Source information:
Structure probing data (DMS and 2A3) for a 177-nucleotide construct. It was measured as part of the RMDB library OK2TRN.

[RMDB]
RNA sequence: GGGAACGACUCGAGUAGAGUCGAAAAGGCGUUGGCGGUCGACACCGUUCCGGAGUCCGUCCGCCGUCAGGUGAUCGCCCAGCGCUUGCCGUCGCACGACUGGCCGGACCGGGUGUUGCGGGUCACCCACCAAUCCCUUCUUCGGAAGGGAUUGGUGAAAAGAAACAACAACAACAAC
Reactivity to DMS in 0.01 (KOAc 150mM, MgCl2 10mM, bicine 150mM(pH8.5), 24C), signal-to-noise 2, nucleotides 027 to 126: g000g010c040g020u010u020g010g030c030g030g010u000c040g000a030c010a080c070c020g000u010u010c180c050g010g000a100g020u010c030c090g020u000c030c010g010c010c020g000u010c080a050g010g020u010g010a030u010c060g000c030c010c010a060g000c070g010c020u000u000g000c020c020g010u000c050g030c210a120c130g010a010c030u010g040g020c000c080g010g000a100c040c040g000g000g020u000g010u010u000g020c040g000g030g010u000c010a050c010c010
Reactivity to 2A3 in 0.01 (KOAc 150mM, MgCl2 10mM, bicine 150mM(pH8.5), 24C), signal-to-noise 2, nucleotides 027 to 126: g060g030c100g040u100u140g040g000c010g000g050u040c030g020a010c040a040c020c060g070u300u200c110c160g000g000a040g020u050c110c100g090u030c010c020g010c020c000g000u030c000a000g040g080u030g020a030u030c080g030c040c030c040a020g040c050g040c230u020u050g020c030c000g020u040c020g130c110a120c180g110a040c100u300g020g040c020c010g030g060a070c020c030g010g030g000u090g060u050u120g050c040g010g010g040u020c040a010c000c000